[RMDB]
RNA sequence: GGGAACGACUCGAGUAGAGUCGAAAAUACUACGCGGCCUCCCACCUCUCUGCCCGGAGCCGGCCGCCCGCCCAGAGACCCGGCCGGCUCCCACCGUCGCUUGGUCGACGACCCGGCGCGCCAACAAACAUAUGGGGUAUUUCGAUACCCCAUAUGUAAAAGAAACAACAACAACAAC
Reactivity to DMS in 0.01 (KOAc 150mM, MgCl2 10mM, bicine 150mM(pH8.5), 24C), signal-to-noise 1, nucleotides 027 to 126: u010a050c050u030a060c080g030c010g020g030c030c010u010c040c030c050a150c110c040u000c020u000c020u000g020c040c020c080g050g050a030g020c020c010g000g000c000c040g020c080c040c070g010c040c020c040a260g040a060g030a070c160c140c050g010g020c030c000g000g010c020u010c000c000c100a040c140c020g030u010c000g040c000u010u010g020g000u010c010g010a080c080g020a040c000c010c030g000g010c010g000c050g020c060c040a030a070c130a040a080